[RMDB]
Chemical mapping of a 177-nucleotide RNA with 2A3 and DMS. DMS adducts were read by reverse transcription with MarathonRT.
RNA sequence: GGGAACGACUCGAGUAGAGUCGAAAAGAUAUGGAUAACCCUAUGGAGCUCUCAUGUCGGAAACGACAUGGAGCUAUGAAGUAGGUUAUCCUAAGUCAAAAUCCAUCCGACUUCGGUCGGAUGGAAACCAUAAGACUAUCUUCGGAUAGUCUUAUGGAAAAGAAACAACAACAACAAC
Reactivity to 2A3 in 0.01 (KOAc 150mM, MgCl2 10mM, bicine 150mM(pH8.5), 24C), signal-to-noise 2, nucleotides 027 to 126: g000a010u040a020u070g010g000a000u010a010a020c120c100c080u030a040u060g240g110a200g060c000u000c030u050c050a020u010g010u010c010g000g000a030a020a030c010g000a010c000a000u000g000g010a000g000c000u010a090u070g010a000a010g010u010a010g020g030u020u010a010u000c000c000u010a040a000g000u010c020a050a010a050a260u020c000c000a010u000c000c000g000a010c030u050u090c270g140g000u000c000g000g000a000u010g000g000a020a000a010
Reactivity to DMS in 0.01 (KOAc 150mM, MgCl2 10mM, bicine 150mM(pH8.5), 24C), signal-to-noise 4, nucleotides 027 to 126: g000a040u000a190u020g010g000a010u000a000a010c160c080c100u000a020u000g020g000a090g010c000u010c000u020c030a000u000g010u020c000g000g010a040a050a100c000g020a000c000a010u000g020g000a010g000c010u000a030u020g020a160a210g000u000a020g000g000u000u000a000u000c000c000u010a030a090g010u000c010a090a110a120a140u010c000c000a020u000c010c000g000a010c000u000u020c260g030g010u000c000g010g000a010u000g010g000a000a010a070

2A3 adducts were read by reverse transcription with SuperScript II with manganese. It was measured as part of the RMDB library TTRDES. The RNA was probed in 150 mM KOAc, 10 mM MgCl2 and 150 mM bicine (pH 8.5) at 24 C.